[RMDB]
RNA sequence: GGGAACGACUCGAGUAGAGUCGAAAACAUGAGAUCGCCUGAGGCACAGACGGUUGCAUCAGGGAAGGUCUCUUUUAGGGUUUUGAGAAGCGACCAAUCGGCAUUGCCACCGUAGGCUUGCGAUCGGUGUAAAGGGUUUUUUCGAAAACCCUUUACAAAAAGAAACAACAACAACAAC
Reactivity to DMS in 0.01 (KOAc 150mM, MgCl2 10mM, bicine 150mM(pH8.5), 24C), signal-to-noise 7, nucleotides 027 to 126: c080a080u010g000a020g010a010u000c010g010c000c040u000g000a020g000g010c010a040c040a240g010a140c250g030g020u010u000g020c010a040u000c010a020g000g000g000a070a060g010g000u000c000u000c000u000u000u000u020a110g010g010g010u000u000u000u000g010a130g000a100a120g000c120g010a070c010c020a060a060u010c020g010g020c040a060u010u010g010c040c030a090c110c200g010u000a120g010g010c020u010u000g020c020g000a060u000c040g000g020
Reactivity to 2A3 in 0.01 (KOAc 150mM, MgCl2 10mM, bicine 150mM(pH8.5), 24C), signal-to-noise 2, nucleotides 027 to 126: c040a060u130g010a030g010a010u020c060g210c190c010u040g000a020g000g000c060a000c020a060g300a130c120g190g010u200u030g000c000a010u010c000a030g000g000g040a050a090g000g000u020c000u000c000u050u010u000u030a010g000g000g000u010u000u060u130g110a060g000a060a040g030c040g070a010c000c010a000a020u070c020g090g040c060a070u000u220g030c010c000a040c060c040g060u020a090g020g030c010u010u000g010c010g020a040u070c030g000g050